RNA sequence: GGGAACGACUCGAGUAGAGUCGAAAACGCAAAACAGUGAGUGGACGGAACAAAUCCCCUUCCCACCUCCCCACUGUCCACUCACUGUCUUCCUAAUAGGAAAUAUAAAUCGGGGGUGGGAAGGGGAGGUCGAUAUGGAGUUCGCUCCAUAUCGACCAAAAGAAACAACAACAACAAC
Reactivity to 2A3 in 0.01 (KOAc 150mM, MgCl2 10mM, bicine 150mM(pH8.5), 24C), signal-to-noise 2, nucleotides 027 to 126: c110g030c070a030a070a050a000c000a000g060u000g000a000g010u000g000g000a000c010g000g060a030a080c080a050a160a140u060c000c000c010c000u000u000c010c000c000a000c000c000u020c030c080c000c030a050c000u020g000u000c000c000a000c000u000c000a000c010u020g000u020c000u010u000c000c000u040a140a080u130a120g180g090a020a140a000u220a020u050a090a180a020u200c040g010g000g000g000g000u020g000g000g000a000a000g000g000g000g000a000
The record gives the reactivity of an RNA of 177 nucleotides to 2A3. For 2A3 the reverse transcriptase was SuperScript II with manganese. Source: RMDB library OK1LIB, as collected in RNAgym. Reactivities are given for positions 27 through 126.